Structure probing data (DMS and 2A3) for a 177-nucleotide construct. The reactions ran in a buffer of 150 mM KOAc, 10 mM MgCl2 and 150 mM bicine (pH 8.5), at 24 C. As a SHAPE reagent, 2A3 marks flexible, mostly unpaired nucleotides at the ribose 2'-OH. For DMS the reverse transcriptase was MarathonRT.
RNA sequence: GGGAACGACUCGAGUAGAGUCGAAAAGAAGGGCCGGACUUUUUGAAUGUAAGCAUCAAACCCUCACCCUGACAAAAAAUGUGGCUUUCUUUCUCUUGAAGAGGUCCUGUCUUUUUCCCUUUUUUGGAGUUACCUAUUACUUCGGUAAUAGGUAACUAAAAGAAACAACAACAACAAC
Reactivity to DMS in 0.01 (KOAc 150mM, MgCl2 10mM, bicine 150mM(pH8.5), 24C), signal-to-noise 4, nucleotides 027 to 126: g010a090a040g010g010g010c030c070g000g020a040c020u000u010u010u020u020g000a080a050u010g010u010a060a060g030c070a070u010c050a050a060a130c070c010c000u000c050a070c040c030c040u000g000a070c110a000a030a070a060a050a070u020g000u020g010g000c030u010u000u000c020u010u000u000c020u010c120u010u030g020a060a060g000a060g010g000u000c010c000u000g010u000c000u000u000u000u000u000c000c000c000u000u000u000u000u000u010g000g030
Reactivity to 2A3 in 0.01 (KOAc 150mM, MgCl2 10mM, bicine 150mM(pH8.5), 24C), signal-to-noise 6, nucleotides 027 to 126: g020a000a010g010g000g000c010c020g030g070a070c010u040u070u020u060u100g050a060a020u080g020u170a040a030g030c010a040u090c060a080a100a140c000c020c010u030c020a060c020c020c010u040g050a040c080a030a090a010a030a010a050u180g040u090g060g010c000u030u070u020c000u000u060u010c030u040c010u070u130g080a080a040g020a030g020g010u010c000c000u050g100u040c010u010u030u010u020u030c010c000c000u020u050u010u010u020u040g070g020